[RMDB]
RNA sequence: GGGAACGACUCGAGUAGAGUCGAAAAUAUACAUCGGAAGUCGGCACAACACCGGACUCGCGGUGAGCGAUGCAGCGUAGCUUAUGCUACGCAGCUGCUGUGCGGAUGGCUAGCAUAUGCUAGCCUAGAUCCGCUCCUAGUUCGCUAGGAGCGGAUCAAAAGAAACAACAACAACAAC
Reactivity to 2A3 in 0.01 (KOAc 150mM, MgCl2 10mM, bicine 150mM(pH8.5), 24C), signal-to-noise 5, nucleotides 027 to 126: u200a010u060a030c060a090u050c020g060g000a050a030g090u040c010g050g070c040a020c010a070a160c010a050c030c000g130g080a190c040u040c100g180c050g040g000u010g000a010g000c020g210a190u110g010c030a010g000c000g010u010a000g010c020u260u240a120u300g000c000u010a000c000g000c010a000g010c000u010g000c000u010g020u040g030c040g110g000a050u080g020g000c000u010a010g000c030a150u160a070u300g000c000u000a000g000c000c000u000a010
Reactivity to DMS in 0.01 (KOAc 150mM, MgCl2 10mM, bicine 150mM(pH8.5), 24C), signal-to-noise 2, nucleotides 027 to 126: u040a070u010a080c220a100u010c010g000g000a050a100g000u010c020g000g000c040a020c050a070a140c020a020c030c050g020g020a100c180u010c160g030c020g020g020u000g010a140g000c010g000a050u030g000c030a070g010c020g000u030a000g000c000u020u010a080u040g000c000u000a000c000g020c030a010g000c000u030g000c020u000g000u000g000c030g000g020a010u010g000g000c000u000a020g040c010a240u020a070u030g010c000u000a000g000c000c000u010a060
Chemical mapping of a 177-nucleotide RNA with 2A3 and DMS. The reactions ran in a buffer of 150 mM KOAc, 10 mM MgCl2 and 150 mM bicine (pH 8.5), at 24 C. Source: RMDB library OK1LIB, as collected in RNAgym.